[RMDB]
RNA sequence: GGGAACGACUCGAGUAGAGUCGAAAACUUACACUUGAUACCUAUCUACAGGUUGUCUUCCUGCGACCUAAUGGAGAAUACUCAUCUUAGUCUGGGCUUCGUACUUAGAUGCUUUCAGUACUUAUCCCACUUUGCGAAAGUUCGCUUUCGCAAAGUGAAAAGAAACAACAACAACAAC
Reactivity to DMS in 0.01 (KOAc 150mM, MgCl2 10mM, bicine 150mM(pH8.5), 24C), signal-to-noise 2, nucleotides 027 to 126: c120u010u010a120c090a060c100u010u000g000a080u020a070c070c010u000a110u000c050u010a070c160a040g000g010u000u000g020u000c050u000u020c030c030u000g010c020g030a040c030c020u000a070a120u010g010g000a080g010a120a060u010a040c060u010c030a060u000c030u020u000a070g020u000c040u000g010g000g020c070u000u010c070g030u000a060c090u000u000a080g010a040u000g010c230u000u000u010c080a060g040u000a020c030u000u000a050u010c020c040
Reactivity to 2A3 in 0.01 (KOAc 150mM, MgCl2 10mM, bicine 150mM(pH8.5), 24C), signal-to-noise 2, nucleotides 027 to 126: c010u060u120a020c100a030c080u110u080g030a050u200a190c030c000u080a090u160c030u060a030c020a090g040g000u010u000g010u050c020u020u000c000c000u000g000c010g040a000c010c030u120a080a030u230g040g000a030g040a020a050u050a100c030u020c050a080u000c010u030u050a010g010u000c040u030g030g060g090c030u160u140c050g010u020a040c020u020u010a030g020a060u040g030c030u070u190u110c010a020g020u000a010c000u080u050a030u030c000c000